[RMDB]
RNA sequence: GGGAACGACUCGAGUAGAGUCGAAAAGAUAUGGAGCGAUGGCUAGGUUCCAGAUCGGAAACGAUCUGGACCUUGGACCCAUCGAACUACUCCUAAGUCAAAAGUUCCCCAGUUCGCUGGGGAACAACCCUAAACACGAGUUCGCUCGUGUUUAGGGAAAAGAAACAACAACAACAAC
Reactivity to 2A3 in 0.01 (KOAc 150mM, MgCl2 10mM, bicine 150mM(pH8.5), 24C), signal-to-noise 1, nucleotides 027 to 126: g020a010u040a020u120g000g000a000g010c000g010a000u010g010g040c030u040a020g010g000u230u060c000c010a010g010a010u000c010g000g020a030a060a050c010g000a000u000c010u000g000g000a000c010c000u010u080g010g040a050c000c000c010a000u020c000g000a030a020c020u180a050c000u010c010c000u030a090a050g040u060c050a040a070a040a170g010u000u000c020c000c000c010a010g010u040u100c230g010c130u000g000g000g000g000a000a000c000a000a000
Reactivity to DMS in 0.01 (KOAc 150mM, MgCl2 10mM, bicine 150mM(pH8.5), 24C), signal-to-noise 2, nucleotides 027 to 126: g020a070u010a300u010g000g000a030g010c010g010a000u000g010g020c030u010a020g030g000u010u000c010c000a000g000a000u000c000g000g000a100a070a190c000g030a010u000c000u000g000g010a020c000c000u000u000g040g040a100c300c010c000a020u000c000g020a060a040c150u010a300c010u000c010c000u000a070a130g000u010c030a080a070a070a090g000u000u000c020c000c000c030a010g000u000u030c250g010c020u000g000g000g000g000a000a000c000a010a030